[RMDB]
Notes: The data come from the RNA Mapping Database (RMDB), library OK1LIB. This 177-nucleotide RNA was probed chemically with DMS and 2A3. For DMS, 17,704 sequencing reads were counted. The RNA was probed in 150 mM KOAc, 10 mM MgCl2 and 150 mM bicine (pH 8.5) at 24 C. 2A3 adducts were read by reverse transcription with SuperScript II with manganese. For DMS the reverse transcriptase was MarathonRT.
RNA sequence: GGGAACGACUCGAGUAGAGUCGAAAACCAGAAUACUGGAACGUAGGAUAGGCGACUACGUUUGGGAUCCAAGGCUAUGAGUUGACAGCGGAUCCCAAUAGGCUUCGCGUGGUGAAAUAGGCACCAGGUAACUUGAUUGAUUCGUCAAUCAAGUUACAAAAGAAACAACAACAACAAC
Reactivity to DMS in 0.01 (KOAc 150mM, MgCl2 10mM, bicine 150mM(pH8.5), 24C), signal-to-noise 7, nucleotides 027 to 126: c000c000a120g000a190a080u040a070c080u020g000g010a050a040c030g010u000a010g000g000a080u010a090g010g010c030g010a080c020u010a010c030g020u000u000u000g000g010g010a000u010c000c020a150a300g030g010c030u010a110u010g010a120g030u010u010g010a150c140a060g020c170g010g010a010u000c000c000c010a010a010u010a050g010g000c080u000u000c030g010c090g020u010g000g000u010g000a050a090a070u030a070g000g000c030a040c020c020a060g010
Reactivity to 2A3 in 0.01 (KOAc 150mM, MgCl2 10mM, bicine 150mM(pH8.5), 24C), signal-to-noise 9, nucleotides 027 to 126: c010c010a010g100a090a220u300a150c060u090g030g050a050a000c000g010u010a010g030g050a160u040a130g060g040c030g030a010c010u020a010c010g040u010u020u010g010g000g010a000u010c010c020a140a060g200g000c010u050a070u230g100a130g200u150u180g160a100c040a020g030c020g010g000a000u000c000c000c000a000a000u020a010g010g010c050u060u040c050g030c040g070u070g000g020u020g060a110a100a110u140a090g070g000c010a000c020c010a010g110